[RMDB]
RNA sequence: GGGAACGACUCGAGUAGAGUCGAAAAUAGAUGAGAGUUAUAGCAAUCGUCGUAUUCUUAUCACUGUAUGUGACGAUUGGUGAACGCUACAUACAGAUGAGACGGUAGCGUUCACACACCGUCUCAAGAUAGUAUUGUGAUUCGUCACGAUGCUAUCAAAAGAAACAACAACAACAAC
Reactivity to 2A3 in 0.01 (KOAc 150mM, MgCl2 10mM, bicine 150mM(pH8.5), 24C), signal-to-noise 9, nucleotides 027 to 126: u140a010g100a040u040g020a020g000a000g060u100u060a120u080a060g040c010a010a020u020c010g010u000c000g000u010a020u030u030c020u040u100a070u150c080a060c130u090g020u060a020u030g030u020g000a000c000g000a020u010u040g040g030u030g010a000a000c000g010c000u000a000c010a050u160a050c070a030g300a260u170g030a070g020a050c060g020g000u000a000g000c000g000u010u010c000a000c000a000c000a000c000c030g070u000c000u000c010a000a020
Reactivity to DMS in 0.01 (KOAc 150mM, MgCl2 10mM, bicine 150mM(pH8.5), 24C), signal-to-noise 9, nucleotides 027 to 126: u030a060g010a060u000g000a030g000a090g010u010u010a070u040a130g010c030a010a030u010c020g010u000c010g020u000a030u010u000c030u010u010a020u040c180a130c200u020g000u010a030u010g010u010g000a020c000g000a020u000u000g000g010u000g000a010a000c010g000c010u000a000c000a090u030a170c180a090g020a120u020g010a090g020a140c180g010g010u000a000g010c010g010u000u000c010a010c010a030c120a070c130c050g000u000c000u000c020a060a130